RNA sequence: GGGAACGACUCGAGUAGAGUCGAAAAGAUAUGGACGUUCGAUUGUUGACGAGUCUGUGUCGGAAACGACACUGACUCGAAGGAUUUCGCGUCCUAAGUCAAAUCGUCACAGUUCGCUGUGACGAAACCUUGCAAGUACCUUCGGGUACUUGCAAGGAAAAGAAACAACAACAACAAC
Reactivity to 2A3 in 0.01 (KOAc 150mM, MgCl2 10mM, bicine 150mM(pH8.5), 24C), signal-to-noise 2, nucleotides 027 to 126: g010a020u020a030u140g000g000a020c000g030u090u090c070g100a050u000u210g300u270u240g280a250c230g020a010g010u000c010u000g000u000g000u030c010g010g050a000a000a010c020g010a000c000a000c020u040g030a000c000u000c020g010a000a000g160g020a030u000u000u040c010g000c000g000u000c000c010u040a040a000g010u020c050a080a010a300u060c020g020u000c010a010c000a000g020u120u170c300g070c180u020g010u000g010a000c000g000a030a010a000
Reactivity to DMS in 0.01 (KOAc 150mM, MgCl2 10mM, bicine 150mM(pH8.5), 24C), signal-to-noise 1, nucleotides 027 to 126: g030a040u000a210u010g000g010a010c010g040u000u000c120g000a020u000u000g030u000u020g000a300c090g000a020g000u000c000u000g060u000g030u010c000g000g000a030a020a110c000g010a000c010a020c000u000g030a010c000u020c010g000a110a100g020g010a050u010u000u000c140g000c090g040u020c010c000u000a040a080g010u020c000a050a220a140u020c000g020u000c000a000c000a000g000u000u010c300g000c000u030g000u000g000a000c000g000a020a020a080